An RNA of 207 nucleotides, treated with 2A3 and DMS and read out base by base. The data come from the RNA Mapping Database (RMDB), library RNAMAK. The DMS profile rests on 4,696 reads. The reactions ran in a buffer of 150 mM KOAc, 10 mM MgCl2 and 150 mM bicine (pH 8.5), at 24 C. In probing experiments dimethyl sulfate is read out at A N1 and C N3, which are open when not base-paired. Values cover nucleotides 27 to 156.
[RMDB]
RNA sequence: GGGAACGACUCGAGUAGAGUCGAAAAGGGGUCACCCGUUUGACGUCGAAGACAUGACGGUACACUGAAGCCUCCACGGUGUACGCGUCAACAGCUUCGACCGAGGGUGACGGAGGCACCCAAAAGAGAAAUCUAGUGUUCGCACUAGAUUUCUCAACUAUUGUUUAUGCUUCGGCAUAAACAAUAGAAAAGAAACAACAACAACAAC
Reactivity to 2A3 in 0.01 (KOAc 150mM, MgCl2 10mM, bicine 150mM(pH8.5), 24C), signal-to-noise 7, nucleotides 027 to 156: g120g020g040g000u010c010a000c020c010c000g010u170u150u120g020a010c000g000u000c000g010a010a000g030a110c160a280u260g000a000c010g000g010u000a000c000a000c010u010g020a130a000g020c010c010u010c000c000a030c030g000g010u050g020u060a080c180g030c010g220u000c010a050a040c050a050g010c000u000u000c000g000a000c000c000g000a030g000g000g000u010g000a000c000g000g000a000g000g000c000a020c000c010c000a030a110a020a040g000a000g010a000a000a000u000c000u000a010g000u010g050u090u100c290g040c120a000c000u000a000g010a000u000u000u000c000u000c000a000a000
Reactivity to DMS in 0.01 (KOAc 150mM, MgCl2 10mM, bicine 150mM(pH8.5), 24C), signal-to-noise 2, nucleotides 027 to 156: g000g000g060g000u000c030a030c000c000c020g000u000u010u030g010a070c220g000u000c010g020a030a040g010a100c060a190u010g020a020c010g000g010u000a010c010a030c020u010g010a030a140g030c020c020u010c010c010a220c010g010g020u010g000u000a000c000g020c030g040u000c000a070a120c160a110g020c010u000u000c020g010a020c000c010g000a070g050g000g020u010g000a040c030g010g030a050g060g050c020a100c000c020c010a040a040a100a140g010a040g010a000a020a000u000c000u000a030g020u000g030u000u000c300g030c020a010c010u010a000g000a000u010u000u000c000u000c000a000a090